[RMDB]
RNA sequence: GGGAACGACUCGAGUAGAGUCGAAAAACCUUUGUGAUACAGGGAAAGCAUUUCGAGGAUCGCAUGUAACAAGCACUGCCCAUUGGGCAGUGCCGCCCAUGCGGGAGAAAUGUAACACUGUAUCACUCUGGUAAAUCCGUCGGUUCGCCGACGGAAACCUAAGUGUUUGCUUCGGCAAACACUUAGGAAAAGAAACAACAACAACAAC
Reactivity to 2A3 in 0.01 (KOAc 150mM, MgCl2 10mM, bicine 150mM(pH8.5), 24C), signal-to-noise 2, nucleotides 027 to 156: a000c010c000u020u010u020g010u000g010a000u000a000c000a000g000g000g110a100a090a050g010c000a000u020u000u000c070g010a280g050g000a010u010c010g000c010a000u000g070u130a150a150c130a250a020g010c000a010c010u010g010c000c030c280a300u260u300g010g000g000c000a000g000u000g010c000c000g000c000c020c000a000u000g010c010g000g000g000a010g000a000a000a000u000g000u010a050a000c060a010c040u010g000u010a000u000c000a000c000u000c000u000g000g010u000a090a090a070u020c000c000g010u010c000g010g010u040u060c250g030c120c000g010a040c000g000g000a060a010a000
About this RNA:
Chemical mapping of a 207-nucleotide RNA with 2A3.